[RMDB]
RNA sequence: GGGAACGACUCGAGUAGAGUCGAAAAGUAGUGGAGAAGAAAUAAGUGGAAACACUUCGCGCACGUCCACUACAACGUGCGCAGUAUUGGAGUGUUUGAGGGAGAACCUCAAGCACUCCAGUACAAACGGGAUUUUAGGGUUCGCCCUAAAAUCCCGAAAAGAAACAACAACAACAAC
Reactivity to 2A3 in 0.01 (KOAc 150mM, MgCl2 10mM, bicine 150mM(pH8.5), 24C), signal-to-noise 2, nucleotides 027 to 126: g010u020a000g010u030g050g130a150g040a200a100g090a060a140a110u230a180a010g040u010g010g000a010a010a010c020a000c010u140u120c090g000c000g000c000a000c000g000u000c010c010a030c000u010a000c000a010a010c040g000u000g030c000g020c050a010g000u000a000u000u000g030g000a000g000u000g020u000u010u000g000a000g010g000g000a190g110a240a240c000c000u000c000a000a010g000c000a000c000u000c000c000a000g040u000a000c000a000a030a000